An RNA of 177 nucleotides, treated with DMS and 2A3 and read out base by base. Reactivities are given for positions 27 through 126. For DMS the reverse transcriptase was MarathonRT. Conditions: 150 mM KOAc, 10 mM MgCl2 and 150 mM bicine (pH 8.5), 24 C. Source: RMDB library RFMREP, as collected in RNAgym.
RNA sequence: GGGAACGACUCGAGUAGAGUCGAAAAAAUGGCCAUUUGGUAUCUGACACAUGGUCUGCUCUUGUGACUAUUAGUCUCGAAAUAUGGCAUAAAACAAGGGGGAACGGAUCUUGCGACAUUGGUGGUUUGAAUUAUUAACGUUCGCGUUAAUAAUUCAAAAAGAAACAACAACAACAAC
Reactivity to DMS in 0.01 (KOAc 150mM, MgCl2 10mM, bicine 150mM(pH8.5), 24C), signal-to-noise 3, nucleotides 027 to 126: a040a060u010g000g010c000c010a030u000u000u010g010g010u000a070u010c100u000g000a100c060a060c120a070u000g010g010u000c010u000g030c070u000c050u010u000g010u000g010a060c040u010a060u000u010a140g010u010c010u010c060g020a070a060a120u000a060u000g010g010c020a060u010a090a060a070a080c110a040a080g000g010g000g000g000a090a090c090g000g000a050u000c060u000u000g000c040g000a060c090a050u000u000g000g010u010g010g010u000u000
Reactivity to 2A3 in 0.01 (KOAc 150mM, MgCl2 10mM, bicine 150mM(pH8.5), 24C), signal-to-noise 3, nucleotides 027 to 126: a000a010u120g030g010c020c000a060u090u030u060g090g020u110a130u060c070u100g100a010c000a000c000a090u010g010g010u030c020u050g030c020u020c000u020u090g040u030g030a030c020u000a040u220u070a070g010u000c010u000c110g050a040a080a060u130a060u100g040g000c050a050u090a040a070a000a030c040a040a060g010g000g020g020g000a040a000c010g050g020a030u010c010u050u060g030c010g020a040c040a080u040u130g030g010u060g020g000u020u020